[RMDB]
RNA sequence: GGGAACGACUCGAGUAGAGUCGAAAAUCAUCAUCAUAGUUGUCCGCCAGACAAAGGCGCUGAAUCCGAGGUUCCGUAAUCGAACCGCACUCCGAUACACAUACCCCAUACCCCUACCCCAAUCCCAGCCCCUAUCCAUACCCAUACAGUAUUGGAACAUAUAGUAAUCAUUCGUGAUUACUAUAUGAAAAGAAACAACAACAACAAC
Reactivity to 2A3 in 0.01 (KOAc 150mM, MgCl2 10mM, bicine 150mM(pH8.5), 24C), signal-to-noise 5, nucleotides 027 to 156: u050c020a020u020c010a010u020c020a040u090a110g040u050u090g060u060c030c010g000c010c020a050g050a200c080a080a070a040g030g010c040g000c060u050g090a070a040u040c060c050g070a050g010g020u020u020c030c040g080u160a080a120u130c050g010a030a020c020c000g010c010a030c030u030c030c030g040a040u100a080c040a010c010a060u130a100c000c020c020c000a010u030a070c000c020c000c020u010a040c020c040c000c000a010a020u020c000c000c000a010g030c020c000c000c010u010a030u010c000c000a020u020a030c020c010c000a020u060a110c040a050g040u050a050u080u160g010g010a020a000
Reactivity to DMS in 0.01 (KOAc 150mM, MgCl2 10mM, bicine 150mM(pH8.5), 24C), signal-to-noise 4, nucleotides 027 to 156: u010c050a100u000c070a080u000c050a100u010a080g030u000u010g010u000c030c040g000c010c020a120g010a140c070a050a100a090g010g010c030g020c050u010g020a100a090u000c030c030g000a100g020g030u000u000c010c050g020u000a090a120u010c080g020a040a050c020c020g010c050a070c060u000c030c010g000a150u000a070c030a060c030a120u000a100c000c020c010c030a110u000a110c070c010c000c030u010a100c020c010c020c030a060a170u000c020c000c010a160g000c030c010c000c020u000a070u000c030c020a070u000a060c020c000c020a130u010a090c060a090g010u000a070u000u000g030g010a070a300